[RMDB]
RNA sequence: GGGAACGACUCGAGUAGAGUCGAAAAGUCCAGGGUGUGCCGUGACCUAUUCCACCGGCGCUGGCCUGAUAUUGUAGGGGACAAUGGACGUCAGUGCUUCAGCAGGUGGCGUGCCCGACGCGGUGGAUCUUCGGACGUGGUUCGCCACGUUUGAGGGAAAAGAAACAACAACAACAAC
Reactivity to DMS in 0.01 (KOAc 150mM, MgCl2 10mM, bicine 150mM(pH8.5), 24C), signal-to-noise 9, nucleotides 027 to 126: g010u020c020c010a090g000g010g020u000g010u000g010c010c020g020u020g020a080c070c050u010a120u020u010c010c010a030c030c020g000g010c040g020c020u000g000g000c020c030u020g010a230u050a030u010u010g010u010a140g010g010g000g010a300c030a030a030u010g000g010a230c280g010u000c010a010g010u010g000c010u010u030c140a110g030c110a070g010g020u010g000g000c070g010u010g000c010c020c040g000a060c090g010c030g000g010u000g000g000a050
Reactivity to 2A3 in 0.01 (KOAc 150mM, MgCl2 10mM, bicine 150mM(pH8.5), 24C), signal-to-noise 9, nucleotides 027 to 126: g060u010c010c010a010g010g010g010u050g010u010g020c000c010g050u070g130a090c010c010u050a120u090u030c010c000a010c000c010g040g000c000g000c010u010g010g000c000c040u100g030a040u030a020u080u040g040u050a090g010g080g010g010a010c020a020a040u040g030g030a020c030g000u010c000a010g010u010g070c000u120u110c020a140g030c030a020g060g050u020g020g000c000g000u020g020c000c000c010g000a010c040g000c020g010g000u010g010g020a040

Chemical mapping of a 177-nucleotide RNA with DMS and 2A3. Source: RMDB library OK1LIB, as collected in RNAgym. The reactions ran in a buffer of 150 mM KOAc, 10 mM MgCl2 and 150 mM bicine (pH 8.5), at 24 C.